Source: RMDB library OK3TST, as collected in RNAgym. Structure probing data (2A3) for a 207-nucleotide construct. The RNA was probed in 150 mM KOAc, 10 mM MgCl2 and 150 mM bicine (pH 8.5) at 24 C.
[RMDB]
RNA sequence: GGGAACGACUCGAGUAGAGUCGAAAAGUAUAUAUUUAAGCAAUGAUUUGAUGUUUUCACGUAAACAAUCAUCACCGCGAAGUUUGCGUGCACGGCAAUCAAUGUUGGUUACGGUGUAAGGUAUAACUAAUAAAUUUAAGCCGUGUUCGGCCAUUAAGUGAUCGGUACAAUUCGUUGUACCGAUCACAAAAGAAACAACAACAACAAC
Reactivity to 2A3 in 0.01 (KOAc 150mM, MgCl2 10mM, bicine 150mM(pH8.5), 24C), signal-to-noise 1, nucleotides 027 to 156: g020u020a090u000a020u000a000u250u070u260a100a010g070c090a080a080u120g060a060u070u010u040g060a060u050g040u020u000u160u110c120a140c110g060u140a000a000a000c040a050a010u090c040a020u090c000a000c060c040g000c000g100a110a010g100u030u050u060g020c000g000u000g000c000a010c000g000g000c010a020a000u020c000a040a010u010g000u000u040g050g000u010u020a040c110g150g000u000g120u140a020a050g050g000u190a100u000a250a000c010u000a000a070u010a120a300a020u000u120u030a050a000g000c010c000g000u040g040u000u010c010g010g000c000c070a070u090u210a200a050